[RMDB]
Structure probing data (2A3 and DMS) for a 177-nucleotide construct.

RNA sequence: GGGAACGACUCGAGUAGAGUCGAAAAGCUCUAGGAGACUAGAGCGAUACGUUAGAGAGCUCGUGGCAUGACUAACGGAUAGCAAGGUACGAGGUUGCCAGAGGACAUAGCUAUAGCUAUGUCCAAAGAGCUAUCUUAGCUUCGGCUAAGAUAGCUCAAAAGAAACAACAACAACAAC
Reactivity to 2A3 in 0.01 (KOAc 150mM, MgCl2 10mM, bicine 150mM(pH8.5), 24C), signal-to-noise 2, nucleotides 027 to 126: g000c000u000c000u000a010g020g050a040g080a040c000u000a010g000a000g030c000g000a000u000a030c010g000u040u040a070g030a050g030a040g230c020u000c040g080u150g000g060c020a030u100g050a220c010u000a080a010c080g070g010a000u020a010g120c050a000a020g040g000u020a000c030g110a120g020g000u060u000g010c010c000a030g040a090g160g000a000c000a000u000a000g000c000u130a020u040a300g000c000u000a000u000g000u010c000c000a000a000a000
Reactivity to DMS in 0.01 (KOAc 150mM, MgCl2 10mM, bicine 150mM(pH8.5), 24C), signal-to-noise 1, nucleotides 027 to 126: g000c000u000c000u000a000g000g000a140g040a200c000u000a000g000a000g020c000g000a050u000a010c090g000u010u030a010g000a200g000a150g000c000u010c010g000u010g000g000c020a070u000g000a040c040u000a010a030c050g000g010a070u030a100g000c100a100a140g000g000u000a030c030g000a090g000g000u010u000g000c010c040a090g000a300g000g000a020c030a000u000a000g000c000u050a100u090a090g010c000u000a000u000g000u010c000c000a000a000a190
Conditions: 150 mM KOAc, 10 mM MgCl2 and 150 mM bicine (pH 8.5), 24 C.
It was measured as part of the RMDB library OK1LIB.